[RMDB]
RNA sequence: GGGAACGACUCGAGUAGAGUCGAAAAAGAACUGGCUUGGUUGAUAGUUUAAUCAGAUAACGACAUAUGGUAUGCCAGGUGUAACUCAUGUUGACAUAUAAAAACUAGCUUUUAACAGUAGAAUUUGGUCAUUAAUCUCUUUCGAGAGAUUAAUGACAAAAGAAACAACAACAACAAC
Reactivity to DMS in 0.01 (KOAc 150mM, MgCl2 10mM, bicine 150mM(pH8.5), 24C), signal-to-noise 3, nucleotides 027 to 126: a100g000a100a050c010u000g000g010c020u000u010g020g000u010u010g010a100u000a030g000u000u010u010a080a060u030c140a140g000a110u010a090a090c110g000a080c210a050u010a050u000g000g010u000a020u010g000c000c000a010g010g010u000g020u030a070a110c060u000c050a070u010g010u000u000g000a110c070a040u000a040u010a050a040a060a040a060c050u010a040g010c060u000u010u010u010a060a070c160a030g010u010a050g020a170a180u000u000u000g000
Reactivity to 2A3 in 0.01 (KOAc 150mM, MgCl2 10mM, bicine 150mM(pH8.5), 24C), signal-to-noise 3, nucleotides 027 to 126: a000g060a030a000c010u000g050g030c020u030u060g040g030u040u060g040a150u160a100g120u110u060u060a080a050u090c040a020g030a240u170a130a090c120g030a010c030a030u100a040u200g210g040u120a050u080g030c030c000a000g000g000u010g020u030a050a030c020u010c060a040u060g000u050u030g050a040c100a030u200a010u070a090a090a000a020a000c010u050a040g100c010u080u040u020u120a080a030c060a030g020u060a020g090a110a120u110u100u080g080
Structure probing data (DMS and 2A3) for a 177-nucleotide construct. 2A3 adducts were read by reverse transcription with SuperScript II with manganese. Conditions: 150 mM KOAc, 10 mM MgCl2 and 150 mM bicine (pH 8.5), 24 C. It was measured as part of the RMDB libraries RFM100 and RFMREP.